RNA sequence: GGGAACGACUCGAGUAGAGUCGAAAAAGGUGUGGAGCGACCUUAAACAGUUCUGGUGGUGCUCUGAAUGGAGUGCUCUAUUGAGAUUAUAAAAUAGAAGGUAAGCUAUUAUCUCUUACAACAGGGCGAAGCACUCGGGGGUUCGCCCCCGAGUGAACAUUAUUGGUAACUUCGGUUACCAAUAAUGAAAAGAAACAACAACAACAAC
Reactivity to DMS in 0.01 (KOAc 150mM, MgCl2 10mM, bicine 150mM(pH8.5), 24C), signal-to-noise 2, nucleotides 027 to 156: a070g010g060u020g010u000g020g000a070g010c010g000a100c020c020u000u020a070a070a050c020a160g000u000u000c030u010g020g020u000g010g040u010g020c020u000c040u000g010a090a100u000g020g020a090g060u000g010c020u000c040u000a070u010u000g010a140g020a130u010u000a200u010a050a070a080a090u000a050g000a090a090g010g020u000a060a090g000c090u020a050u000u000a050u000c010u000c010u000u000a110c020a110a160c030a040g020g010g040c020g010a060a170g000c000a020c000u010c030g010g050g010g020g000u000u000c270g010c000c000c010c000c000g000a030g020u010g000a030a120
Reactivity to 2A3 in 0.01 (KOAc 150mM, MgCl2 10mM, bicine 150mM(pH8.5), 24C), signal-to-noise 5, nucleotides 027 to 156: a000g010g000u020g030u050g010g010a010g010c010g000a010c000c010u110u140a120a080a000c040a060g010u030u010c010u030g060g020u060g010g040u070g010c000u000c020u040g100a080a060u230g030g020a020g010u030g010c010u000c010u070a120u010u100g020a020g010a010u060u110a070u280a160a110a090a020u060a020g030a080a030g100g060u130a050a040g030c020u010a020u060u020a040u090c020u020c000u040u090a060c050a100a010c010a050g000g000g020c030g030a070a010g030c000a000c000u000c010g010g000g000g000g010u040u040c110g050c010c000c000c000c000g000a000g000u000g000a000a000
Source: RMDB library M2RFPK, as collected in RNAgym. This 207-nucleotide RNA was probed chemically with DMS and 2A3. High DMS reactivity at an A or C suggests that its Watson-Crick edge is free. The reactions ran in a buffer of 150 mM KOAc, 10 mM MgCl2 and 150 mM bicine (pH 8.5), at 24 C. The DMS profile rests on 3,030 reads. DMS adducts were read by reverse transcription with MarathonRT.